[RMDB]
The record gives the reactivity of an RNA of 177 nucleotides to DMS. For DMS the reverse transcriptase was MarathonRT. The reactions ran in a buffer of 150 mM KOAc, 10 mM MgCl2 and 150 mM bicine (pH 8.5), at 24 C. It was measured as part of the RMDB library TTRINS. For DMS, 2,063 sequencing reads were counted.

RNA sequence: GGGAACGACUCGAGUAGAGUCGAAAAGAUAUGGAUAAAUGACUACGAUCGAUGAAGCACAUCGAUCUGGAGCUCGGAAACGAGCUUCCAGGGAGUGUCAUCGAUCGUAGUCAUUUAUCCUAAGUCAUCGUAUAUUUUUCUUCGGAAAAAUAUACGAAAAAGAAACAACAACAACAAC
Reactivity to DMS in 0.01 (KOAc 150mM, MgCl2 10mM, bicine 150mM(pH8.5), 24C), signal-to-noise 2, nucleotides 027 to 126: g000a040u000a300u010g000g000a010u010a000a000a010u010g000a020c000u000a010c000g000a010u000c010g040a000u000g010a110a150g020c040a030c010a300u020c210g000a080u010c020u000g000g000a060g000c000u010c000g010g000a070a100a230c000g000a010g000c010u010u000c000c010a020g000g000g000a110g030u000g020u010c010a000u000c000g010a000u000c010g000u000a000g000u000c000a000u000u010u000a000u010c000c000u000a010a090g020u000c050a150